[RMDB]
RNA sequence: GGGAACGACUCGAGUAGAGUCGAAAAGAAUGCGGUACAUGAGUUCGGCCAGGUGCGCCGGGGACAGGUGGCCCCUCUCUCUCAAGACGCCCAAGAGGUCCUUGAUGGUCCCAGGAGCUGAGUCCGCGGCGAUGUCCCGACACAGAAACAGCAGCCGUAAGCUGUACAAGUUCGCUUGUACAGCUUAAAAAGAAACAACAACAACAAC
Reactivity to DMS in 0.01 (KOAc 150mM, MgCl2 10mM, bicine 150mM(pH8.5), 24C), signal-to-noise 2, nucleotides 027 to 156: g010a080a080u000g020c040g000g030u000a110c060a090u000g030a300g030u000u000c050g010g050c060c010a080g010g030u010g000c040g010c000c010g010g010g030g000a030c020a150g010g020u010g020g040c010c000c000c000u000c010u020c010u000c140u010c030a020a060g010a100c050g010c000c000c010a180a130g020a160g010g030u010c140c030u000u000g010a070u000g020g030u000c040c020c050a110g040g030a110g040c000u000g020a300g000u000c020c030g020c020g010g020c040g020a050u000g000u000c020c020c010g000a050c040a080c070a150g020a110a100a080c030a100g020c050a070g010c030c020g000
Reactivity to 2A3 in 0.01 (KOAc 150mM, MgCl2 10mM, bicine 150mM(pH8.5), 24C), signal-to-noise 3, nucleotides 027 to 156: g130a030a070u100g020c030g030g020u050a110c050a160u070g020a050g100u040u050c020g010g000c040c050a050g080g020u050g040c030g010c010c010g100g040g000g000a010c000a060g000g280u160g110g080c040c000c030c000u030c000u000c000u000c000u000c010a020a030g010a100c050g020c000c000c010a090a040g070a140g060g000u070c030c000u030u040g020a060u070g020g040u070c050c040c020a000g010g000a020g000c030u050g030a020g050u000c010c000g130c020g130g000c010g010a050u120g030u020c030c010c010g020a000c050a000c000a030g120a020a060a000c020a020g070c010a000g040c000c020g000
Chemical mapping of a 207-nucleotide RNA with DMS and 2A3. It was measured as part of the RMDB library OK3TST.